[RMDB]
RNA sequence: GGGAACGACUCGAGUAGAGUCGAAAAGAUAUGGACAAGCUUUGAUCGACCCGUCGAAGAACUCGGAAACGAGGGAGACGAGGUCGGGAGCUUGUCCUAAGUCAUAAGGCUCAGUUCGCUGAGCCAAGCUGAAAUGCAUGUUCGCAUGCAUUUCAGCAAAAGAAACAACAACAACAAC
Reactivity to DMS in 0.01 (KOAc 150mM, MgCl2 10mM, bicine 150mM(pH8.5), 24C), signal-to-noise 1, nucleotides 027 to 126: g010a020u000a300u000g010g010a030c000a000a000g010c000u000u020u010g000a160u000c000g030a030c010c030c040g000u000c000g000a060a150g010a140a210c000u010c000g000g000a140a120a140c000g000a000g000g000g000a080g000a000c000g000a130g050g020u020c040g020g000g000a040g000c000u000u000g020u000c000c000u000a000a040g020u000c040a070u010a130a150g040g000c000u000c000a010g000u000u020c220g000c010u000g010a000g000c010c000a000a000
Reactivity to 2A3 in 0.01 (KOAc 150mM, MgCl2 10mM, bicine 150mM(pH8.5), 24C), signal-to-noise 1, nucleotides 027 to 126: g000a040u040a060u100g000g000a010c000a020a000g030c020u190u160u130g160a160u210c000g000a000c010c040c000g000u010c070g150a300a100g000a090a050c010u000c010g000g030a060a050a060c030g000a000g010g030g010a070g010a000c020g030a230g010g010u010c000g010g000g000a020g010c000u000u000g010u000c000c000u010a000a000g000u020c010a010u010a270a140g030g000c000u000c000a030g060u130u140c220g050c120u000g000a000g050c010c000a000a000